[RMDB]
RNA sequence: GGGAACGACUCGAGUAGAGUCGAAAACCAUUCCUUAUACCAUGAGUAUUGCUGAAUUCAGUUUAGCGUGCAUGCUCUUGGCUAUUCUCAUAGUGAUUGUCAAAUUUGGAGUUACUUAUUCGUCAAUAAAACACUACCACGUUCGCGUGGUAGUGAAGGUCGAUAUUAACUUCGGUUAAUAUCGACCAAAAGAAACAACAACAACAAC
Reactivity to 2A3 in 0.01 (KOAc 150mM, MgCl2 10mM, bicine 150mM(pH8.5), 24C), signal-to-noise 3, nucleotides 027 to 156: c030c000a040u080u050c030c000u180u180a110u030a070c010c000a030u050g020a030g020u030a050u160u170g010c010u020g060a140a110u150u180c070a100g130u110u060u110a070g000c030g000u020g060c030a010u050g020c010u000c000u000u010g010g020c000u000a020u080u040c060u020c030a070u060a080g080u070g060a090u050u080g100u130c080a040a100a100u110u070u060g060g000a060g040u110u090a080c020u110u060a050u200u070c050g100u030c120a090a120u080a160a060a050a020c010a000c000u000a010c000c000a000c020g020u020u030c130g050c010g110u000g010g000u000a000g010u010g000a000a000
Reactivity to DMS in 0.01 (KOAc 150mM, MgCl2 10mM, bicine 150mM(pH8.5), 24C), signal-to-noise 1, nucleotides 027 to 156: c020c030a190u000u000c000c000u000u000a160u000a060c000c010a000u010g010a020g040u000a010u010u000g090c000u000g010a130a100u000u000c190a200g020u010u000u000a060g040c120g030u000g030c120a190u000g000c000u020c020u010u000g000g040c050u000a090u000u020c050u000c030a150u000a090g000u010g020a030u000u010g020u000c020a110a070a130u000u000u020g020g010a170g030u000u000a060c060u000u000a200u000u020c070g020u010c090a050a040u000a020a050a090a200c000a010c070u000a040c000c000a010c000g040u010u000c300g080c030g020u000g010g000u000a000g000u000g000a010a030